[RMDB]
RNA sequence: GGGAACGACUCGAGUAGAGUCGAAAAGUGAAAGGAGUGUUGGUUUGAAUCACGACUGAAUUUCAGCCAACACCUUGAACAUGAAUAGGCGGGAAGAGUCGAAGGGACAGAACCUUUUGGCCUAAGCACUUCGAAGCAAAUUCGUUUGCUUCGAAGUAAAAGAAACAACAACAACAAC
Reactivity to DMS in 0.01 (KOAc 150mM, MgCl2 10mM, bicine 150mM(pH8.5), 24C), signal-to-noise 5, nucleotides 027 to 126: g010u000g000a120a020a030g020g020a110g030u000g020u000u030g000g000u010u020u010g010a020a040u000c070a090c300g010a220c220u000g000a060a040u010u010u000c000a030g000c000c000a000a000c010a020c000c000u020u010g010a220a070c040a060u020g010a060a080u020a030g000g010c000g000g010g000a060a110g010a120g010u000c020g000a080a060g040g000g010a110c140a150g030a080a100c050c010u000u000u000u010g000g020c000c010u000a040a110g010c130
Reactivity to 2A3 in 0.01 (KOAc 150mM, MgCl2 10mM, bicine 150mM(pH8.5), 24C), signal-to-noise 7, nucleotides 027 to 126: g050u050g050a040a020a020g040g040a210g070u040g000u030u010g030g000u100u250u270g000a010a000u040c040a020c190g300a120c170u110g030a020a080u080u060u040c010a000g010c000c000a000a000c000a000c000c000u000u010g000a020a000c010a020u030g010a080a070u090a060g060g000c050g030g040g050a090a050g030a060g060u040c030g020a030a070g070g000g020a050c060a160g130a170a160c000c000u010u010u030u080g050g000c000c000u040a070a020g050c030
The record gives the reactivity of an RNA of 177 nucleotides to DMS and 2A3. For DMS, 8,930 sequencing reads were counted.